[RMDB]
RNA sequence: GGGAACGACUCGAGUAGAGUCGAAAACUUUUUGGAUGAACUUGAUGAUCCAAAUGUGAGAAUCAUUUUAGAAUGCAGAAUUUAAAUUACAACAUUGUGUUUUGCUCCCUGUUCGUGUGAACAGGGAGAUAGGCUGUCCCUUCGGGGACAGCCUAUCAAAAGAAACAACAACAACAAC
Reactivity to 2A3 in 0.01 (KOAc 150mM, MgCl2 10mM, bicine 150mM(pH8.5), 24C), signal-to-noise 2, nucleotides 027 to 126: c000u040u040u000u050u120g020g020a000u020g040a300a090c050u050u220g080a080u140g080a040u130c010c030a080a000a000u130g030u080g000a040g030a080a060u000c020a030u070u030u040u040a160g060a300a020u100g090c100a000g090a120a050u100u050u120a160a140a060u150u070a120c050a090a000c020a120u170u020g030u040g010u020u000u000u080g010c020u000c000c000c000u000g050u020u000c130g100u190g200u240g190a000a000c000a000g020g000g000a000
Reactivity to DMS in 0.01 (KOAc 150mM, MgCl2 10mM, bicine 150mM(pH8.5), 24C), signal-to-noise 1, nucleotides 027 to 126: c100u010u010u020u000u000g010g010a020u000g020a060a090c130u020u000g000a230u010g010a160u000c000c000a060a150a110u030g010u020g010a000g000a110a010u000c030a050u000u000u020u000a000g000a110a010u000g000c040a050g000a060a040u060u040u080a100a080a080u010u020a090c200a020a030c090a190u140u000g020u000g010u000u000u010u000g000c030u000c000c000c000u010g000u000u000c010g010u000g070u030g010a030a030c000a010g010g000g000a000